[RMDB]
RNA sequence: GGGAACGACUCGAGUAGAGUCGAAAAGAUAUGGACGUUAGACCGCCCUGGCGUUGAAAUCGGAAACGAUGGAGCCAGGGACCCGGUGUAACGUCCUAAGUCAAACGAUCGGCUUCGGCCGAUCGAAUCGUACAAUAGGCUUCGGCCUAUUGUACGAAAAAGAAACAACAACAACAAC
Reactivity to 2A3 in 0.01 (KOAc 150mM, MgCl2 10mM, bicine 150mM(pH8.5), 24C), signal-to-noise 1, nucleotides 027 to 126: g040a010u060a050u120g010g000a000c010g000u000u000a080g100a100c000c000g000c010c000c000u020g010g000c020g240u300u050g000a030a050a010u000c010g020g010a050a080a020c010g010a020u000g020g000a010g000c020c020a020g000g000g010a010c020c020c010g050g010u040g050u000a010a000c000g000u010c000c000u000a010a010g020u010c020a030a040a080c040g000a000u010c000g010g010c030u090u120c300g170g000c000c000g020a000u010c010g010a010a030
Reactivity to DMS in 0.01 (KOAc 150mM, MgCl2 10mM, bicine 150mM(pH8.5), 24C), signal-to-noise 3, nucleotides 027 to 126: g040a050u000a300u000g000g020a020c000g000u010u000a020g000a020c020c020g000c050c010c000u000g000g000c010g000u000u010g000a060a180a010u020c010g010g000a140a170a180c010g010a020u000g000g000a160g020c000c000a010g030g000g010a010c100c300c120g010g050u000g000u000a000a020c000g010u010c000c000u000a010a070g000u000c020a100a090a240c010g010a000u000c020g000g010c000u000u020c210g010g000c010c010g010a000u000c000g000a030a050